[RMDB]
RNA sequence: GGGAACGACUCGAGUAGAGUCGAAAAGAUAUGGAUGUUAUAAGUGGACAUGCGUGAAUCUUCGGAAACGAAGAUACCACGCAACAGCCACAUAACAUCCUAAGUCAAAGGGUCGUUCGCGACCCAACCAUGUUCUCACGUUCGCGUGAGAACAUGGAAAAGAAACAACAACAACAAC
Reactivity to DMS in 0.01 (KOAc 150mM, MgCl2 10mM, bicine 150mM(pH8.5), 24C), signal-to-noise 1, nucleotides 027 to 126: g000a030u000a300u000g000g000a060u000g010u000u000a010u010a120a100g110u010g000g000a030c120a190u000g050c000g000u000g000a200a000u000c000u000u020c000g070g020a110a170a290c050g000a000a000g000a050u000a140c110c000a000c010g020c000a040a010c190a280g000c050c000a000c040a090u000a020a000c000a010u000c000c020u000a000a170g020u000c010a090a210a120g000g000g000u000c000g000u000u070c300g070c000g050a010c000c000c030a130a040
Reactivity to 2A3 in 0.01 (KOAc 150mM, MgCl2 10mM, bicine 150mM(pH8.5), 24C), signal-to-noise 1, nucleotides 027 to 126: g030a040u060a020u160g000g000a000u000g050u040u000a000u010a250a300g000u000g000g030a030c140a270u300g020c000g000u000g020a050a010u040c020u000u000c020g060g020a070a130a010c010g000a020a000g020a010u000a030c150c010a010c010g000c020a000a010c000a000g050c010c000a000c000a000u000a010a000c010a000u000c000c000u000a070a010g000u000c050a120a000a200g010g020g010u000c010g040u030u090c200g000c010g120a010c000c030c000a000a020